RNA sequence: GGGAACGACUCGAGUAGAGUCGAAAAAGAUCUUGAUGCGUUAGCUAGUGAUAUUUUUGACACUCCUAGCGUACUUCAAGCUACUCUUUCUGAGUUUUCACACUUAGCUACCUUUGCUGAGUUGGAACAUUCAGUUCUGCUUCGGCAGAACUGAAUGAAAAGAAACAACAACAACAAC
Reactivity to DMS in 0.01 (KOAc 150mM, MgCl2 10mM, bicine 150mM(pH8.5), 24C), signal-to-noise 2, nucleotides 027 to 126: a020g000a090u000c000u000u000g010a010u000g000c030g000u000u000a020g010c130u000a020g010u000g010a160u010a010u000u010u000u020u010g000a210c030a020c020u010c300c000u000a000g040c000g020u000a010c160u000u000c010a000a010g000c130u010a030c030u000c020u000u000u010c000u010g030a090g000u010u000u000u000c010a020c140a000c010u010u000a000g010c000u010a170c270c260u000u000u000g000c010u000g010a020g000u000u000g000g000a010a100
Reactivity to 2A3 in 0.01 (KOAc 150mM, MgCl2 10mM, bicine 150mM(pH8.5), 24C), signal-to-noise 2, nucleotides 027 to 126: a000g050a040u060c000u000u010g000a010u000g000c000g000u000u000a000g020c100u020a010g020u000g020a070u040a250u220u190u070u170u280g050a000c010a000c000u010c010c000u000a000g000c000g020u000a010c040u050u030c000a000a010g010c020u090a070c020u000c000u010u070u000c030u030g060a100g090u020u020u000u000c050a060c000a000c010u020u000a000g000c000u080a110c020c090u150u180u090g020c010u000g010a000g000u030u000g030g010a020a010
An RNA of 177 nucleotides, treated with DMS and 2A3 and read out base by base. Source: RMDB library 15KREP, as collected in RNAgym. Values cover nucleotides 27 to 126.